RNA sequence: GGGAACGACUCGAGUAGAGUCGAAAAUACUUGUCUGGAUUUUGCAAGGCGUAGAUGAGUCACUUGAGAAGGAGAACUGGAAUGGCGGCCUGGGUUCAUUUCUGUUGUCCAAUCCAAGGGCCUGUGGUAGUAACGUGGAAUUCGUUCCACGUUACUAAAAAGAAACAACAACAACAAC
Reactivity to DMS in 0.01 (KOAc 150mM, MgCl2 10mM, bicine 150mM(pH8.5), 24C), signal-to-noise 3, nucleotides 027 to 126: u010a050c030u000u000g000u000c010u000g000g000a160u010u000u010u010g020c110a080a080g010g020c060g050u000a040g020a060u000g000a060g020u000c060a130c010u000u000g000a080g030a070a300g000g000a040g000a020a020c020u000g010g010a040a030u000g000g020c060g020g020c140c110u000g010g000g010u010u000c020a030u000u000u000c020u000g010u000u000g000u000c010c010a040a140u010c060c010a040a030g010g000g010c010c030u000g020u000g000g020
Reactivity to 2A3 in 0.01 (KOAc 150mM, MgCl2 10mM, bicine 150mM(pH8.5), 24C), signal-to-noise 2, nucleotides 027 to 126: u080a020c060u070u050g050u000c020u080g130g130a200u050u110u070u270g060c010a020a030g070g000c030g140u100a030g020a150u040g050a010g070u030c070a050c280u050u050g040a060g000a250a020g020g010a030g020a020a020c000u030g000g020a010a000u000g020g000c020g090g120c090c110u080g110g070g000u170u110c000a020u010u020u000c010u020g070u040u000g050u000c020c020a030a090u000c010c000a000a020g010g040g000c000c020u060g030u070g110g080
Chemical mapping of a 177-nucleotide RNA with DMS and 2A3. Source: RMDB library OK2TRN, as collected in RNAgym. The RNA was probed in 150 mM KOAc, 10 mM MgCl2 and 150 mM bicine (pH 8.5) at 24 C. For 2A3 the reverse transcriptase was SuperScript II with manganese.